[RMDB]
RNA sequence: GGGAACGACUCGAGUAGAGUCGAAAAGGAAGACAGGAUGUCAGGAGAUAUUCAAGGAAAGGUCAGUGGUCACAAAGGCCAUGGAGAUAUCUAGUUACAUAAGCUUCCUGGAUUUCACAAGCAGGAAGUAAUCAGUGAUGUUGACCAGACUGAUGAACUCAGCUGGGGCCUUCGGGCCCCAGCUGAGAAAAGAAACAACAACAACAAC
Reactivity to 2A3 in 0.01 (KOAc 150mM, MgCl2 10mM, bicine 150mM(pH8.5), 24C), signal-to-noise 2, nucleotides 027 to 156: g030g020a000a000g040a010c020a010g040g020a010u050g040u060c030a010g060g040a030g000a040u170a040u100u150c010a030a050g040g000a110a000a000g040g000u000c020a010g010u010g020g000u060c020a050c100a140a090a030g000g000c000c000a010u040g010g030a020g000a030u040a010u020c030u040a080g040u090u080a030c070a140u160a100a070g010c000u000u000c010c000u000g010g030a150u120u140u170c120a090c000a050a000g140c000a020g000g000a020a000g000u030a010a070u090c010a000g030u000g080a050u050g030u050u080g010a010c000c010a000g080a110c020u000g000a000u080g020a040a040
An RNA of 207 nucleotides, treated with 2A3 and read out base by base.